[RMDB]
RNA sequence: GGGAACGACUCGAGUAGAGUCGAAAAGGGGGAAGCCAGCCCAGCGGUGCUCUGAAGGUGGGGCCCAGGGAAUGGAGGCUCUGUUCUUAUGGUAUAGUCAGGAGCGUGAGGCUGAGCAGUGCUGUGGCACCCUCAUUCUCUUCGGAGAAUGAGGGUGAAAAGAAACAACAACAACAAC
Reactivity to DMS in 0.01 (KOAc 150mM, MgCl2 10mM, bicine 150mM(pH8.5), 24C), signal-to-noise 3, nucleotides 027 to 126: g010g000g010g000g010a150a060g010c050c050a150g020c020c010c010a090g000c050g020g000u000g010c000u000c030u000g010a100a110g010g030u000g020g000g010g010c040c010c030a090g000g020g010a080a040u010g010g000a130g010g010c060u000c010u000g000u000u000c020u000u000a050u010g020g010u010a120u010a120g010u010c090a150g020g000a060g010c050g010u010g020a120g000g010c060u010g000a050g000c020a080g010u000g010c020u010g000u000g020g000
Reactivity to 2A3 in 0.01 (KOAc 150mM, MgCl2 10mM, bicine 150mM(pH8.5), 24C), signal-to-noise 2, nucleotides 027 to 126: g010g020g000g000g030a000a030g020c000c020a020g040c000c000c000a020g070c020g090g020u070g000c020u040c020u130g080a130a030g080g030u120g020g010g010g020c000c040c000a010g050g020g030a030a050u090g030g030a070g050g020c030u000c000u060g070u070u040c010u030u170a160u100g080g070u120a030u050a200g060u060c040a020g000g040a040g010c030g000u070g010a050g020g030c010u030g020a010g000c030a050g130u050g030c020u040g000u110g040g000

Structure probing data (DMS and 2A3) for a 177-nucleotide construct. For 2A3 the reverse transcriptase was SuperScript II with manganese. The RNA was probed in 150 mM KOAc, 10 mM MgCl2 and 150 mM bicine (pH 8.5) at 24 C. Source: RMDB library OK2TST, as collected in RNAgym. For DMS the reverse transcriptase was MarathonRT.